[RMDB]
RNA sequence: GGGAACGACUCGAGUAGAGUCGAAAAUUAUCAGAAGGAGUAACGGACGCUGGCAUUCACCGUGUUACCCACGUUGUUCUUACCAGAUGCCGGUUUUAAGACUCCAGACCGAAGCGAAGAUUAUCACGAGUCCAUCCUGAUUCGUCAGGAUGGACUCAAAAGAAACAACAACAACAAC
Reactivity to DMS in 0.01 (KOAc 150mM, MgCl2 10mM, bicine 150mM(pH8.5), 24C), signal-to-noise 1, nucleotides 027 to 126: u000u000a040u000c050a130g030a200a080g010g010a020g000u000a130a140c010g000g020a040c300g040c010u000g020g000c060a040u000u000c050a010c040c050g020u000g020u010u000a090c300c300c000a010c050g000u020u000g000u000u000c090u000u020a080c110c040a090g030a080u000g060c040c000g020g000u010u010u000u000a120a160g000a070c000u010c000c030a070g000a220c100c020g000a050a060g030c090g010a030a120g010a070u000u000a060u000c080a090c170

The record gives the reactivity of an RNA of 177 nucleotides to DMS. The RNA was probed in 150 mM KOAc, 10 mM MgCl2 and 150 mM bicine (pH 8.5) at 24 C. Values are in units of 0.01, from 0 to 300, in steps of 10. Reactivities are given for positions 27 through 126.